[RMDB]
RNA sequence: GGGAACGACUCGAGUAGAGUCGAAAAUCUACAAGUUCUUUACUUGCUGAACCAUCUUCUUUUACACCAAAACGUUGUGCUUGUAAUAAUAAAUCAGCUGCUUUUUGAUCAUGUGCUAAUGUGUAUGGGUACGCACAGAGUUCGCUCUGUGCGUACCAAAAGAAACAACAACAACAAC
Reactivity to 2A3 in 0.01 (KOAc 150mM, MgCl2 10mM, bicine 150mM(pH8.5), 24C), signal-to-noise 1, nucleotides 027 to 126: u100c080u140a070c030a010a030g000u000u000c050u040u140u000a000c000u030u040g000c010u020g000a090a030c000c080a070u000c060u010u000c010u000u000u060u000a030c030a110c280c000a000a140a000a000c070g000u020u020g060u000g080c100u050u050g000u000a000a180u050a150a000u060a110a300a000u290c000a050g060c000u050g000c000u020u000u000u000u070g170a140u070c100a160u090g070u090g000c160u110a000a100u050g030u000g070u030a070u300g070
Chemical mapping of a 177-nucleotide RNA with 2A3.
Conditions: 150 mM KOAc, 10 mM MgCl2 and 150 mM bicine (pH 8.5), 24 C.
2A3 adducts were read by reverse transcription with SuperScript II with manganese.
High 2A3 reactivity points to a flexible backbone, as in loops and unpaired stretches.
For 2A3, 424 sequencing reads were counted.